Chemical mapping of a 177-nucleotide RNA with DMS and 2A3. Conditions: 150 mM KOAc, 10 mM MgCl2 and 150 mM bicine (pH 8.5), 24 C.

[RMDB]
RNA sequence: GGGAACGACUCGAGUAGAGUCGAAAAGGACAUCCGCUGCUCGGAGGAUGAGAAGCUGUGUGACCCCAACACCAGGCCUGUAGGGGAGAAGAACUGCACGGGCCCGCCCUGUGACCGGCAGUGGACCUCAUACAAUGGGAUUCGUCCCAUUGUAUGAAAAAGAAACAACAACAACAAC
Reactivity to DMS in 0.01 (KOAc 150mM, MgCl2 10mM, bicine 150mM(pH8.5), 24C), signal-to-noise 9, nucleotides 027 to 126: g000g000a180c130a180u000c010c010g020c020u000g010c020u010c040g020g000a150g010g000a070u010g010a120g010a100a110g020c070u010g010u000g010u010g010a260c030c010c010c020a140a140c030a040c030c080a090g010g010c070c040u000g010u010a150g010g010g000g000a120g010a130a140g000a070a100c080u000g010c090a050c020g010g000g010c020c050c040g000c060c010c020u010g010u000g020a190c030c020g000g010c010a020g010u000g010g010a050c100c040
Reactivity to 2A3 in 0.01 (KOAc 150mM, MgCl2 10mM, bicine 150mM(pH8.5), 24C), signal-to-noise 9, nucleotides 027 to 126: g050g010a010c020a120u000c010c010g010c010u010g000c080u110c200g030g020a030g040g020a040u100g050a050g070a160a030g050c120u050g020u010g020u050g210a160c010c010c010c000a030a000c010a010c020c030a050g050g030c010c010u060g020u070a120g000g050g060g030a080g090a120a030g030a090a020c040u110g010c100a000c030g010g010g010c000c020c000g020c000c010c000u120g050u090g160a120c010c010g000g000c000a000g000u000g000g010a010c000c010